[RMDB]
RNA sequence: GGGAACGACUCGAGUAGAGUCGAAAAAAUGCUCCACACAGGUUUAAAAAACUUGAAUACGUGGCCAUCCAACUGAAUCAGUGAUGAAACACCAGCAGCUAUGGUUGAUAGGGAUAUCGGCAGUUAGGAACCAAAUAACGUUCGCGUUAUUUGGUUCAAAAGAAACAACAACAACAAC
Reactivity to DMS in 0.01 (KOAc 150mM, MgCl2 10mM, bicine 150mM(pH8.5), 24C), signal-to-noise 1, nucleotides 027 to 126: a080a050u000g000c090u010c030c010a020c080a260c010a070g020g010u000u020u010a000a110a080a060a080a000c010u000u000g030a160a140u010a140c250g030u000g010g000c300c030a060u000c010c020a080a000c060u000g020a090a070u030c040a080g000u010g020a010u010g000a060a090a130c090a070c050c060a100g010c050a040g050c030u040a070u000g030g010u030u000g020a100u000a100g000g000g000a070u000a030u000c030g020g000c050a060g030u000u000a100g000
Notes:
This 177-nucleotide RNA was probed chemically with DMS. The data come from the RNA Mapping Database (RMDB), library RFMREP.